[RMDB]
RNA sequence: GGGAACGACUCGAGUAGAGUCGAAAACAGCAUGCAUUUAUGAAACAUAAGGGCGGUGAUUCAACUGACUUCAUAGCCCUCAUUAUGGCUUAUGGCAAUUGCACAUUUGGUGCUCCAGAUGAUGCCUACAUCUGAUCCUUCGGGAUCAGAAAAAGAAACAACAACAACAAC
Reactivity to 2A3 in 0.01 (KOAc 150mM, MgCl2 10mM, bicine 150mM(pH8.5), 24C), signal-to-noise 9, nucleotides 027 to 129: c030a000g060c030a040u080g010c020a020u040u060u100a140u180g150a110a090a040c030a030u070a050a030g020g010g000c010g030g010u000g010a020u040u040c040a160a170c130u230g070a050c030u030u000c020a020u030a020g000c000c000c000u020c020a030u010u120a040u040g030g000c010u040u050a020u090g060g010c030a080a150u130u070g000c010a020c000a040u070u070u100g110g000u100g040c040u030c010c010a000g010a030u050g000a000u060g020c000c000u030a040c010a080
Reactivity to DMS in 0.01 (KOAc 150mM, MgCl2 10mM, bicine 150mM(pH8.5), 24C), signal-to-noise 7, nucleotides 027 to 129: c060a140g060c090a040u000g010c000a060u030u060u030a050u060g040a000a000a000c100a050u030a070a060g040g020g040c000g000g110u020g030a040u020u010c090a200a150c280u120g020a080c160u000u000c020a000u010a070g010c020c040c000u000c160a000u000u020a040u000g020g070c070u010u050a050u030g040g040c120a140a090u050u020g000c000a100c060a130u010u010u010g000g000u030g060c080u060c050c020a020g020a040u000g020a090u040g030c030c020u000a070c140a090